[RMDB]
Overview:
This 207-nucleotide RNA was probed chemically with DMS and 2A3.
RNA sequence: GGGAACGACUCGAGUAGAGUCGAAAACGUAAUAAUCAAUUGGAUGGCUCAUUCUUUUACCUUUCUUUGAUUGGAAUUGUAUUUGUGUCAUUUACCACACAAGGACGUAUUGAUGCCAUAGAUUCAAGGUCCGUGCAACCUAACCCUAUGAACGCACAUCCUGUCCCAAAUUCGUUUGGGACAGGAUAAAAGAAACAACAACAACAAC
Reactivity to DMS in 0.01 (KOAc 150mM, MgCl2 10mM, bicine 150mM(pH8.5), 24C), signal-to-noise 2, nucleotides 027 to 156: c090g030u000a070a200u000a070a060u000c030a070a110u000u000g030g010a060u010g010g030c040u000c070a110u000u020c080u000u000u000u000a100c030c010u010u010u020c000u020u000u000g010a110u000u000g010g010a080a040u010u020g010u010a070u000u000u010g000u030g010u010c050a110u000u000u000a080c060c080a050c040a080c040a040a070g020g010a070c070g020u000a110u000u010g030a100u000g030c040c020a040u010a030g010a080u000u010c010a090a030g000g010u020c000c020g070u020g030c010a030a010c000c010u000a040a020c060c020c070u000a030u000g000a030a060c060g000c060a100c090
Reactivity to 2A3 in 0.01 (KOAc 150mM, MgCl2 10mM, bicine 150mM(pH8.5), 24C), signal-to-noise 6, nucleotides 027 to 156: c030g030u060a050a080u110a090a050u120c090a020a130u090u160g100g010a010u010g030g000c010u010c020a020u040u050c020u050u160u060u170a250c010c020u060u050u020c090u110u110u300g050a060u030u050g010g030a030a020u030u050g040u140a070u070u070u030g020u020g010u010c000a010u030u090u160a080c050c010a040c010a010c020a090a050g040g030a030c070g050u080a060u060u120g020a040u140g020c020c000a030u030a060g070a060u090u120c060a070a020g010g000u010c030c030g000u030g000c000a030a020c000c000u050a020a030c010c010c020u050a050u130g060a060a010c060g010c000a000c000
The 2A3 profile rests on 3,646 reads. Conditions: 150 mM KOAc, 10 mM MgCl2 and 150 mM bicine (pH 8.5), 24 C.